[RMDB]
RNA sequence: GGGAACGACUCGAGUAGAGUCGAAAACGUCUCACUUUCGAGUGAGACGAAAGAAAAAGGCUAGGACCGGCCAAAUAAAGGUCCAAAAAGAUGGAAAGAUCAAAAGUUGGCAGUUCGCUGCCAACAAAUCUUAGCAAGGGUUCGCCCUUGCUAAGAUAAAAGAAACAACAACAACAAC
Reactivity to DMS in 0.01 (KOAc 150mM, MgCl2 10mM, bicine 150mM(pH8.5), 24C), signal-to-noise 1, nucleotides 027 to 126: c010g000u000c000u000c000a000c000u000u000u000c110g060a000g060u050g000a010g000a000c000g010a000a020a160g000a060a090a100a170a140g000g000c040u000a120g000g000a000c000c000g000g050c020c000a090a040a110u020a050a110a130g000g020u000c000c000a080a040a010a100a120g000a050u000g020g000a040a050a080g000a040u000c070a090a110a070a170g000u000u000g000g000c030a000g030u000u010c190g000c000u000g010c000c020a000a010c020a030a040
Chemical mapping of a 177-nucleotide RNA with DMS. The DMS profile rests on 966 reads. Conditions: 150 mM KOAc, 10 mM MgCl2 and 150 mM bicine (pH 8.5), 24 C.